[RMDB]
RNA sequence: GGGAACGACUCGAGUAGAGUCGAAAACAGGAAUCAUAAGAAAUUUGGAAGUGGCACGGUGAUGGACGUAGUUUCGAGAACAGAUCAGCGUGGAUCAGGACAAGUUGUGACUUAUGCCCUAAACACCAUAUAGAGGAGGGUUCGCCCUCCUCUAUAUAAAAGAAACAACAACAACAAC
Reactivity to 2A3 in 0.01 (KOAc 150mM, MgCl2 10mM, bicine 150mM(pH8.5), 24C), signal-to-noise 2, nucleotides 027 to 126: c020a010g000g090a010a010u160c010a020u050a120a030g040a070a070a020u090u090u050g050g000a120a030g060u050g030g080c010a000c030g030g090u010g000a050u040g020g040a000c030g040u030a080g040u070u100u130c100g090a080g070a050a040c020a010g050a050u020c030a000g060c000g000u010g070g010a010u050c030a000g020g020a010c000a010a030g020u070u060g050u130g090a020c010u020u060a000u070g020c000c000c000u060a040a040a020c050a030c030c010
Reactivity to DMS in 0.01 (KOAc 150mM, MgCl2 10mM, bicine 150mM(pH8.5), 24C), signal-to-noise 6, nucleotides 027 to 126: c160a090g010g010a090a080u010c030a050u000a050a050g000a090a070a070u000u000u010g000g010a120a200g010u000g000g010c040a040c040g010g020u010g010a060u000g010g020a110c150g020u010a060g010u000u010u020c090g000a090g000a060a070c120a110g000a050u010c020a050g010c060g020u000g010g010a080u000c060a060g000g000a130c040a040a050g000u000u000g010u010g010a120c040u000u000a040u000g010c150c010c010u000a060a060a090c140a090c120c050
Structure probing data (2A3 and DMS) for a 177-nucleotide construct.
For DMS, 5,835 sequencing reads were counted.
2A3 adducts were read by reverse transcription with SuperScript II with manganese.